The data come from the RNA Mapping Database (RMDB), library OK1LIB.
Structure probing data (2A3 and DMS) for a 177-nucleotide construct.
The RNA was probed in 150 mM KOAc, 10 mM MgCl2 and 150 mM bicine (pH 8.5) at 24 C.
2A3 adducts were read by reverse transcription with SuperScript II with manganese.

RNA sequence: GGGAACGACUCGAGUAGAGUCGAAAAGCGAGAGAAAAGAUGAGCCUUGACCUCAUUGUAGCAGGUGGGGCAAGCUACAUUUUUGGUGCAUUACUCUAGUAGGCUGAAAUCUUUGUCACAAGAUGGAGUAGUUUUAUAUAUUCGUAUAUAAAACUACAAAAGAAACAACAACAACAAC
Reactivity to 2A3 in 0.01 (KOAc 150mM, MgCl2 10mM, bicine 150mM(pH8.5), 24C), signal-to-noise 9, nucleotides 027 to 126: g060c050g010a040g000a010g030a090a060a010a010g030a020u040g020a010g020c030c060u120u100g110a300c030c000u010c010a020u020u050g040u060a040g040c100a040g000g060u020g000g010g000g000c010a000a000g000c000u080a090c020a040u030u020u020u040u070g080g030u100g020c050a070u060u150a120c010u030c010u040a070g060u040a040g160g020c070u050g030a030a050a070u040c020u040u070u090g160u090c040a050c030a110a030g030a090u080g020g020a090
Reactivity to DMS in 0.01 (KOAc 150mM, MgCl2 10mM, bicine 150mM(pH8.5), 24C), signal-to-noise 9, nucleotides 027 to 126: g010c050g010a080g000a090g000a090a040a030a030g010a010u000g000a040g000c160c040u000u000g000a170c020c000u000c010a010u000u000g010u010a140g010c180a150g000g010u000g000g000g000g000c030a020a010g000c010u000a080c010a020u000u000u000u000u000g000g020u010g010c060a090u020u010a080c040u010c050u010a080g010u010a050g000g010c040u000g000a060a080a050u010c010u000u000u010g000u020c090a090c150a060a060g000a090u010g000g010a300